[RMDB]
RNA sequence: GGGAACGACUCGAGUAGAGUCGAAAACGUAGUACUUCGGUACUACGAAAAAGAUAUGGACCUAAGGGAGGUUAACAUGGGAGUCGGAAACGAUAGUCCCAUGAUUAACCAUCGAUCUUAGGUCCUAAGUCAAAAAAGGUGAAGUUCGCUUCACCAAGCCUUCACUAUGAUUCGUCAUAGUGAAGGCAAAAGAAACAACAACAACAAC
Reactivity to 2A3 in 0.01 (KOAc 150mM, MgCl2 10mM, bicine 150mM(pH8.5), 24C), signal-to-noise 2, nucleotides 027 to 156: c000g000u000a000g010u010a000c010u010u040c300g090g000u000a000c000u000a010c000g020a020a000a000a000a000g030a010u070a030u080g000g000a000c000c000u020a000a000g020g000g000a010g010g000u000u010a000a010c000a000u000g030g000g000a020g000u010c000g010g030a070a030a020c040g020a010u040a060g230u020c010c000c000a000u000g000a070u000u000a000a010c000c000a060u210c000g000a010u030c000u040u000a000g040g000u000c000c000u000a000a000g000u000c010a020a020a000a220a000a000g040g000u010g020a000a010g020u100u260c200g100c040u010u000c000a000c000c000a000a010
Reactivity to DMS in 0.01 (KOAc 150mM, MgCl2 10mM, bicine 150mM(pH8.5), 24C), signal-to-noise 1, nucleotides 027 to 156: c000g000u000a020g000u000a000c000u000u000c250g030g000u000a010c000u000a020c000g040a010a040a070a050a100g000a150u000a300u000g020g010a010c000c000u000a080a000g010g040g010a040g010g030u010u000a030a000c000a000u010g000g170g010a060g020u000c000g020g000a160a120a300c020g000a030u000a080g000u000c000c000c000a010u000g000a100u000u000a010a070c000c000a140u010c210g000a070u020c010u000u000a030g000g000u000c000c000u000a010a100g010u030c020a000a090a030a100a080a110g020g050u010g010a040a010g030u000u010c240g030c010u000u000c010a040c030c000a040a090